Structure probing data (2A3 and DMS) for a 177-nucleotide construct.
High 2A3 reactivity points to a flexible backbone, as in loops and unpaired stretches.
DMS adducts were read by reverse transcription with MarathonRT.
Values cover nucleotides 27 to 126.
For 2A3, 1,563 sequencing reads were counted.
2A3 adducts were read by reverse transcription with SuperScript II with manganese.
Conditions: 150 mM KOAc, 10 mM MgCl2 and 150 mM bicine (pH 8.5), 24 C.
The DMS profile rests on 1,897 reads.
RNA sequence: GGGAACGACUCGAGUAGAGUCGAAAACUACCUUACUGAGCCAGCUGCCGCCUGGUUCGAGGCUAAUAAGCCUACCCAGCCAGCCCUAACAAUUACUGAGGACACCGCCCGCACAGCCAACCUUGCGGUUUAACACCUUGUUCGCAAGGUGUUAAACAAAAGAAACAACAACAACAAC
Reactivity to 2A3 in 0.01 (KOAc 150mM, MgCl2 10mM, bicine 150mM(pH8.5), 24C), signal-to-noise 1, nucleotides 027 to 126: c020u090a050c010c000u110u120a090c050u140g060a000g020c000c010a010g000c040u080g040c010c040g020c010c000u000g000g000u010u030c010g020a000g000g000c000u040a100a150u150a300a120g000c000c000u010a020c070c020c000a010g010c000c030a020g000c050c000c000u050a090a040c050a010a040u220u110a090c040u020g030a060g100g010a020c010a000c030c030g020c000c000c000g000c020a040c040a020g050c010c000a050a040c070c000u070u220g020c100g030
Reactivity to DMS in 0.01 (KOAc 150mM, MgCl2 10mM, bicine 150mM(pH8.5), 24C), signal-to-noise 3, nucleotides 027 to 126: c090u010a110c050c020u000u030a120c150u010g020a050g000c040c040a040g010c080u000g020c050c120g010c130c020u000g000g020u000u000c090g020a010g040g020c030u020a130a060u000a060a080g020c010c010u010a070c140c010c010a060g010c040c040a090g030c030c020c000u000a090a110c150a070a110u000u000a090c070u000g000a100g000g000a060c070a070c060c040g000c040c040c010g000c050a030c090a060g000c020c050a070a090c030c050u000u000g000c130g020